This 177-nucleotide RNA was probed chemically with 2A3 and DMS.
It was measured as part of the RMDB library OK1LIB.
RNA sequence: GGGAACGACUCGAGUAGAGUCGAAAAGAGCUCGAUGCUAGAUGGUUCCAAUACGUAAUUGGGAUCACUACUUUACAUUGGUAGAGUAGUGUUAUGAUAACGUUAUCGUAACAUCUAGCAUCGAGGAGAUAGGAUUGUGAUUCGUUACAGUUCUAUCAAAAGAAACAACAACAACAAC
Reactivity to 2A3 in 0.01 (KOAc 150mM, MgCl2 10mM, bicine 150mM(pH8.5), 24C), signal-to-noise 9, nucleotides 027 to 126: g060a020g020c000u000c000g000a000u000g000c000u000a000g000a000u000g020g000u010u000c000c000a000a010u180a100c240g150u200a050a030u010u000g000g000g000a000u000c000a000c000u000a000c000u010u010u000a020c020a200u130u300g210g000u020a000g000a000g000u000a000g000u000g000u000u000a000u010g010a010u020a180a120c300g120u260u070a010u010c000g000u000a000a000c000a000u000c000u000a000g000c000a000u000c000g000a000g000g000a000
Reactivity to DMS in 0.01 (KOAc 150mM, MgCl2 10mM, bicine 150mM(pH8.5), 24C), signal-to-noise 9, nucleotides 027 to 126: g010a140g010c000u000c010g010a010u000g010c000u000a010g000a010u010g000g010u000u000c000c000a010a010u010a110c300g020u050a110a040u000u000g000g000g000a000u000c000a000c000u000a000c000u000u000u000a000c000a300u030u040g020g020u000a000g000a000g000u000a000g010u000g010u000u000a000u000g000a010u000a030a180c300g020u040u000a010u000c010g000u000a000a000c000a010u000c000u000a000g000c000a000u000c000g000a010g000g010a050
2A3 adducts were read by reverse transcription with SuperScript II with manganese. For DMS, 58,092 sequencing reads were counted. The 2A3 profile rests on 179,889 reads. Reactivities are given for positions 27 through 126. For DMS the reverse transcriptase was MarathonRT.